[RMDB]
RNA sequence: GGGAACGACUCGAGUAGAGUCGAAAAUGCGUAUUCCUGGCUGUGAUAUGGCCGGUACCGUUGAGACAGUAGGCAAGGAAGUCACGCGCUUUAAAUCUGGUGAUAAGGUUUACUGCGACCUCAGCAGACCCCUAAAAUCGUUCGCGAUUUUAGGGGUAAAAGAAACAACAACAACAAC
Reactivity to 2A3 in 0.01 (KOAc 150mM, MgCl2 10mM, bicine 150mM(pH8.5), 24C), signal-to-noise 2, nucleotides 027 to 126: u170g030c030g010u050a100u100u030c010c010u020g020g040c020u000g000u050g200a090u100a070u230g040g020c040c050g000g010u040a040c020c010g040u010u020g020a030g010a050c010a040g080u090a070g030g130c060a090a020g040g050a050a010g030u070c060a060c050g040c020g000c040u000u100u070a060a170a060u030c040u030g000g010u070g110a110u150a230a000g070g020u020u010u010a040c020u030g100c060g020a040c030c040u040c010a000g010c000a010g030
Reactivity to DMS in 0.01 (KOAc 150mM, MgCl2 10mM, bicine 150mM(pH8.5), 24C), signal-to-noise 3, nucleotides 027 to 126: u010g010c060g000u000a180u000u000c030c000u010g020g020c010u000g000u000g000a150u000a050u000g000g020c030c060g000g020u000a080c060c030g010u010u000g010a240g010a100c040a020g000u000a110g020g030c080a110a080g010g000a060a050g010u010c110a050c060g000c010g010c060u010u000u000a020a030a080u010c020u000g000g040u000g010a090u000a160a050g010g000u000u000u000a050c040u000g040c030g000a110c050c030u000c060a070g010c090a110g000
An RNA of 177 nucleotides, treated with 2A3 and DMS and read out base by base.
The reactions ran in a buffer of 150 mM KOAc, 10 mM MgCl2 and 150 mM bicine (pH 8.5), at 24 C.